Conditions: 150 mM KOAc, 10 mM MgCl2 and 150 mM bicine (pH 8.5), 24 C. This 207-nucleotide RNA was probed chemically with 2A3. For 2A3 the reverse transcriptase was SuperScript II with manganese.
RNA sequence: GGGAACGACUCGAGUAGAGUCGAAAACUAUAAUAAACUUUAAUGAUCUCGAUGAAAAUAAUUUUACAACGGUACCACUGGUCAUAGAUUACGUAACACCUUGUGCAUUAUGUAAAAAACGAUCGCAUAAACAUCCGCAUCAACUAUCGUUGGAAAACAAUAGUGGCAGUUUCGACUGCCACUAUUGAAAAGAAACAACAACAACAAC
Reactivity to 2A3 in 0.01 (KOAc 150mM, MgCl2 10mM, bicine 150mM(pH8.5), 24C), signal-to-noise 1, nucleotides 027 to 156: c020u050a030u210a300a150u300a000a140a100c070u140u070u240a070a090u120g030a050u060c000u030c070g120a160u160g030a020a040a000a070u110a080a070u080u020u160u180a040c030a030a000c000g020g000u000a050c040c040a000c050u030g030g000u060c020a000u030a030g100a150u070u080a070c010g030u030a090a120c020a030c050c110u080u040g030u020g020c000a010u010u050a100u000g000u030a160a080a000a000a000a000c030g060a070u000c000g000c060a030u110a000a060a020c070a010u010c060c020g100c000a030u030c000a020a030c050u030a000u030c000g000u000u000g010g000a090a000a000a000